[RMDB]
RNA sequence: GGGAACGACUCGAGUAGAGUCGAAAACGCAAAGCUGCAGCGCGGCGCUCUGGAGGCCUUGCCCCGCGCCCUGCUCUUUACAUGGCCCGACGUGAGGGCACUUCGCGGGCAGUGCUGCGGCCUCGUGAAACUGCCCCUAAGUUCGCUUAGGGGCAAACAUAUGUAAAACUUUCGAGUUUUACAUAUGAAAAGAAACAACAACAACAAC
Reactivity to DMS in 0.01 (KOAc 150mM, MgCl2 10mM, bicine 150mM(pH8.5), 24C), signal-to-noise 3, nucleotides 027 to 156: c050g060c030a070a060a080g020c030u000g020c010a060g010c000g030c050g020g010c040g020c050u000c080u010g030g030a210g020g030c010c080u010u000g010c020c020c000c020g020c010g010c030c020c050u000g000c010u020c040u010u000u000a100c040a120u020g000g020c020c050c060g020a200c090g010u010g000a150g020g020g010c010a010c020u000u010c020g020c180g020g000g020c010a080g020u000g020c010u000g020c010g030g020c020c000u000c090g000u020g010a120a080a100c070u000g010c000c000c020c000u000a010a040g010u000u000c300g020c020u000u000a010g000g010g030g050c000a000a010a020
Reactivity to 2A3 in 0.01 (KOAc 150mM, MgCl2 10mM, bicine 150mM(pH8.5), 24C), signal-to-noise 6, nucleotides 027 to 156: c030g000c020a040a030a020g000c000u010g000c000a000g020c020g030c050g120g030c050g020c040u060c090u160g110g030a120g030g040c070c170u070u190g000c000c000c000c000g000c020g010c000c000c010u010g020c000u030c020u070u210u110a100c060a120u150g040g010c010c020c020g060a090c070g070u110g080a170g010g010g020c040a060c020u040u070c050g020c040g050g020g010c010a010g020u050g070c010u000g000c000g010g000c000c000u000c000g010u010g010a080a050a020c060u030g000c000c000c000c000u000a010a000g010u020u130c180g050c140u000u000a000g000g000g000g000c000a000a000a000